[RMDB]
RNA sequence: GGGAACGACUCGAGUAGAGUCGAAAAGAUAUGGACGUGCAGUGGAGCUCGGGUCGGAAACGACCCAGAGCGUUGAAACUGUCACGUCCUAAGUCAAAACUAGCUUUAUGUUCGCAUAAAGCUAGAACGUAGUGUUAAGGUUCGCCUUAACACUACGAAAAGAAACAACAACAACAAC
Reactivity to 2A3 in 0.01 (KOAc 150mM, MgCl2 10mM, bicine 150mM(pH8.5), 24C), signal-to-noise 4, nucleotides 027 to 126: g010a000u050a030u120g000g000a000c010g010u010g010c010a010g020u090g090g270a040g020c000u000c010g000g010g020u010c010g000g000a050a020a000c000g010a010c010c040c040a030g000a000g000c000g010u070u080g030a050a010a000c000u010g050u180c020a000c010g000u000c000c000u000a000a000g000u000c010a000a000a080a120c010u000a000g000c000u000u010u020a010u020g050u060u090c300g000c130a000u010a010a020a000g000c000u010a000g000a020a000
Reactivity to DMS in 0.01 (KOAc 150mM, MgCl2 10mM, bicine 150mM(pH8.5), 24C), signal-to-noise 4, nucleotides 027 to 126: g000a040u000a260u010g000g000a010c010g040u000g000c000a010g000u000g010g010a130g010c000u000c010g020g000g030u000c000g010g000a050a050a120c010g010a030c000c000c010a030g030a000g010c000g030u000u000g010a120a210a030c010u000g000u010c010a010c010g000u000c000c000u000a000a050g000u000c020a100a090a150a270c010u000a010g020c000u000u000u000a010u010g000u000u010c270g000c010a010u000a010a000a010g000c000u000a000g000a050a110
Description:
The record gives the reactivity of an RNA of 177 nucleotides to 2A3 and DMS. Reactivities are rounded to 0.1 and cut off at 0 and 3. For 2A3, 16,828 sequencing reads were counted. The data come from the RNA Mapping Database (RMDB), library TTRDES.